The record gives the reactivity of an RNA of 177 nucleotides to DMS and 2A3. For 2A3, 2,067 sequencing reads were counted. High DMS reactivity at an A or C suggests that its Watson-Crick edge is free. Reactivities are given for positions 27 through 126.

[RMDB]
RNA sequence: GGGAACGACUCGAGUAGAGUCGAAAAUGUGGUUCCUUCGGGAACCACACACUACCGAGAAUGAUCCUCGCUAUAUAAAUCAAACCCUUGGAAACAAGGGAACACUCCCUAGCUUCGGCUAGGGAAAUCACGCAUCAAGAUUCGUCUUGAUGCGUGAAAAAGAAACAACAACAACAAC
Reactivity to DMS in 0.01 (KOAc 150mM, MgCl2 10mM, bicine 150mM(pH8.5), 24C), signal-to-noise 1, nucleotides 027 to 126: u020g060u000g000g000u020u000c000c000u070u010c280g000g010g020a000a000c000c000a030c000a020c060a070c040u000a150c070c000g010a070g020a150a080u020g010a110u000c040c000u000c090g050c110u010a040u000a040u000a060a070a100u010c030a110a040a120c010c000c000u010u040g010g000a070a070a160c000a020a010g010g000g010a020a000c160a080c150u020c000c000c000u000a000g020c000u000u010c170g030g040c000u010a010g000g010g000a000a010a030
Reactivity to 2A3 in 0.01 (KOAc 150mM, MgCl2 10mM, bicine 150mM(pH8.5), 24C), signal-to-noise 2, nucleotides 027 to 126: u030g000u000g000g020u010u010c040c010u010u050c250g060g010g000a000a000c030c000a000c010a000c000a000c000u050a030c010c010g040a010g030a100a190u140g030a090u040c010c020u080c020g050c080u040a060u030a040u050a300a140a110u140c080a080a060a270c000c000c000u020u010g000g000a020a040a030c000a000a010g000g010g010a000a010c010a010c020u030c000c010c000u020a010g010c010u050u070c300g100g000c010u020a000g000g000g000a000a010a010